[RMDB]
The record gives the reactivity of an RNA of 170 nucleotides to DMS and 2A3. The RNA was probed in 150 mM KOAc, 10 mM MgCl2 and 150 mM bicine (pH 8.5) at 24 C. For 2A3, 862 sequencing reads were counted. For 2A3 the reverse transcriptase was SuperScript II with manganese. Source: RMDB library 15KLIB, as collected in RNAgym. For DMS, 3,377 sequencing reads were counted.
RNA sequence: GGGAACGACUCGAGUAGAGUCGAAAAAAUUUAAUAGGUUGGCUACCUGUGACUGGACUGAAAGUGGUGAUUACACCCUUGCCAAUACUACAACAGAACCACUCAAACUUUUUGCUGCUGAGACUUUAAGGUCCUUGCUUCGGCAAGGACAAAAGAAACAACAACAACAAC
Reactivity to DMS in 0.01 (KOAc 150mM, MgCl2 10mM, bicine 150mM(pH8.5), 24C), signal-to-noise 2, nucleotides 027 to 129: a070a020u000u000u000a130a040u010a080g030g040u010u000g000g070c020u000a050c100c000u000g010u000g000a060c120u030g010g030a080c040u040g030a140a000a000g030u040g020g040u080g000a060u050u010a220c070a170c060c020c000u000u000g020c030c020a020a060u020a090c020u030a070c170a030a030c000a030g020a070a030c030c010a030c050u010c080a140a100a140c130u020u040u030u000u090g000c030u040g000c070u020g060a110g060a130c050u000u180u000a140a010g010
Reactivity to 2A3 in 0.01 (KOAc 150mM, MgCl2 10mM, bicine 150mM(pH8.5), 24C), signal-to-noise 1, nucleotides 027 to 129: a000a000u130u070u190a120a130u200a020g020g000u000u040g000g000c000u060a060c000c040u060g000u000g000a000c000u000g030g000a000c000u000g000a140a000a000g050u020g000g040u000g000a170u010u000a110c000a000c000c000c030u000u000g000c000c000a070a000u000a040c010u010a000c000a030a000c000a000g020a030a030c000c000a030c060u080c000a210a170a000c030u070u070u080u010u130g200c260u010g010c000u000g070a000g030a120c000u010u020u000a100a070g000